RNA sequence: GGGAACGACUCGAGUAGAGUCGAAAAGAUAUGGAGCGGUGUUAGUGAUGACCUAAUUCGGAAACGAAUUAGCAAGCUGGACACCCGCUCCUAAGUCAAAAGUUUAUACUGUUCGCAGUAUAAACAAGACUUACAUGCACUUCGGUGCAUGUAAGUCAAAAGAAACAACAACAACAAC
Reactivity to 2A3 in 0.01 (KOAc 150mM, MgCl2 10mM, bicine 150mM(pH8.5), 24C), signal-to-noise 1, nucleotides 027 to 126: g040a000u070a010u110g000g000a010g000c010g000g000u050g030u050u070a210g040u040g300a300u170g010a070c000c000u000a020a000u000u000c020g000g000a010a020a020c010g000a010a010u010u000a010g010c000a220a300g060c030u230g070g010a000c000a020c030c080c010g000c000u000c000c010u000a050a000g000u020c040a140a000a000a210g000u010u010u010a000u000a000c000u000g060u050u160c300g020c150a000g000u040a030u000a020a000a000c000a000a020
Reactivity to DMS in 0.01 (KOAc 150mM, MgCl2 10mM, bicine 150mM(pH8.5), 24C), signal-to-noise 1, nucleotides 027 to 126: g000a050u000a230u020g000g010a020g010c030g000g020u020g020u020u000a090g070u000g010a040u010g040a200c300c000u000a000a010u010u000c010g000g000a090a020a170c010g010a010a000u000u000a000g000c040a040a130g000c040u010g030g010a000c010a020c140c070c080g000c000u000c000c000u000a000a040g020u000c010a090a080a200a220g000u000u000u000a000u000a000c000u000g010u010u010c290g020c010a000g000u020a040u000a010a010a000c010a110a100